Source information: An RNA of 307 nucleotides, treated with 2A3 and DMS and read out base by base. It was measured as part of the RMDB library POS240. The DMS profile rests on 5,894 reads. Values cover nucleotides 27 to 266. The RNA was probed in 150 mM KOAc, 10 mM MgCl2 and 150 mM bicine (pH 8.5) at 24 C.

RNA sequence: GGGAACGACUCGAGUAGAGUCGAAAACGUUGACUACGGUCAACGAAGGCUGAACGUGAGUUCAGCCACCUUCAUGCGUGAGCAUGAAGGAACGUCAUCUUCGGAUGACGAACUACGUCGUGAGACGUAGACCUCCGACUUCGGUCGGAGGAAGCAGCAACGUGAGUUGCUGCAGAGACCGACUACGGUCGGUCUCAGGGUCAGAUCGGCGAAAGUCGCCACUUCGCCGAGGAGUGCAAUCUGUGAGGCCCCAGGAGGACUGGGUUACAUCGACGUUCGCGUCGAUGAAAAGAAACAACAACAACAAC
Reactivity to 2A3 in 0.01 (KOAc 150mM, MgCl2 10mM, bicine 150mM(pH8.5), 24C), signal-to-noise 4, nucleotides 027 to 266: c000g000u000u000g010a000c000u030a050c270g080g000u000c000a000a000c000g000a090a020g000g000c000u010g000a010a000c020g080u090g100a120g020u040u000c000a000g000c000c000a020c010c010u010u000c010a000u010g000c010g050u100g080a050g020c000a000u000g000a000a000g010g010a020a040c010g000u000c000a000u000c000u040u050c210g150g000a000u010g000a000c000g010a050a030c000u000a000c000g000u000c000g020u030g130a090g000a020c000g000u000a000g010a030c000c000u000c000c000g010a000c000u050u100c290g140g010u000c000g000g000a000g000g000a000a020g010c000a000g000c000a000a000c020g060u060g080a100g020u030u000g010c000u000g000c000a000g000a000g000a000c000c000g010a000c010u030a040c270g110g000u000c000g000g000u000c000u000c000a010g040g010g000u010c000a000g010a040u010c000g000g000c010g020a070a010a000g020u020c010g010c010c000a010c000u000u000c000g000c000c020g010a010g000g010a020g000u020g000c000a000a020u010c010u020g020u020g030a110g020g000c000c030c010c010a020g040g060a070g070g100a060c010u020g010g010g020u020u020a010
Reactivity to DMS in 0.01 (KOAc 150mM, MgCl2 10mM, bicine 150mM(pH8.5), 24C), signal-to-noise 1, nucleotides 027 to 266: c020g000u000u000g000a020c000u020a100c120g020g010u000c010a000a000c010g000a100a080g000g020c000u000g020a010a010c010g000u020g010a160g010u000u000c020a000g000c000c000a020c010c000u000u020c040a000u000g010c000g000u030g010a210g020c000a010u000g000a010a010g000g000a090a110c040g000u000c000a000u000c000u000u020c130g020g010a010u000g000a020c000g000a140a240c010u000a000c000g020u000c000g000u050g000a180g000a010c000g010u000a010g010a300c010c010u010c000c000g020a020c020u000u020c170g010g040u010c000g000g000a000g000g010a050a050g000c010a010g000c000a030a010c000g020u020g010a150g020u000u000g000c010u000g010c000a050g000a040g010a000c010c000g010a010c000u000a110c110g050g020u010c010g000g000u000c000u000c000a020g010g000g010u020c010a050g000a040u000c000g030g010c000g010a060a080a110g010u000c080g000c020c010a070c070u000u000c010g000c010c010g000a030g000g010a010g000u010g000c010a120a030u000c020u010g010u000g030a110g010g010c010c020c010c020a010g000g000a160g020g010a190c020u000g000g000g000u010u020a150